[RMDB]
RNA sequence: GGGAACGACUCGAGUAGAGUCGAAAACGCUGGGCACAGAGAACUCCGCAACGGACAUGCUGAAGCGCGCACGGCAACAGCCGUUGUUGGAGACUGUGCCUGUGCUGAAGCGCGCACGGCAACCGAAAGGUGCGAAGGUCUCCAUUCGUGGAGACAAUUGGUUAAUAGCUUUCGAGCUAUUAACCAAAAAAGAAACAACAACAACAAC
Reactivity to 2A3 in 0.01 (KOAc 150mM, MgCl2 10mM, bicine 150mM(pH8.5), 24C), signal-to-noise 2, nucleotides 027 to 156: c060g010c020u050g000g000g130c000a000c000a000g000a040g040a220a090c000u000c000c000g000c000a000a000c000g010g060a130c060a190u180g000c000u010g010a280a160g010c000g000c010g000c020a020c030g020g000c050a240a070c030a300g060c000c000g010u000u020g010u100u300g000g000a050g040a020c000u040g000u010g000c010c010u010g010u020g000c020u000g020a120a040g030c010g000c010g010c000a010c030g020g060c000a020a010c010c010g090a150a020a020g000g000u040g000c010g060a060a040g150g000u000c000u020c000c010a020u080u130c140g100u070g000g000a000g010a000c000a000a090
Reactivity to DMS in 0.01 (KOAc 150mM, MgCl2 10mM, bicine 150mM(pH8.5), 24C), signal-to-noise 1, nucleotides 027 to 156: c070g030c010u000g000g000g000c020a080c010a020g000a200g020a080a180c000u040c000c000g030c030a020a020c040g010g010a130c060a180u010g000c010u010g030a140a060g040c000g010c000g060c000a300c070g040g000c000a070a140c080a130g030c000c020g030u000u000g010u000u030g070g000a120g050a080c020u000g020u000g000c020c030u010g020u000g000c000u010g010a100a050g040c000g020c010g040c000a230c040g000g000c050a090a170c030c020g010a090a140a230g020g010u010g030c000g010a150a100g000g020u010c010u020c000c010a100u000u000c240g000u000g010g000a010g030a010c010a000a080

An RNA of 207 nucleotides, treated with 2A3 and DMS and read out base by base. It was measured as part of the RMDB library RNAMAK. Conditions: 150 mM KOAc, 10 mM MgCl2 and 150 mM bicine (pH 8.5), 24 C. DMS adducts were read by reverse transcription with MarathonRT. 2A3 adducts were read by reverse transcription with SuperScript II with manganese. The DMS profile rests on 2,762 reads.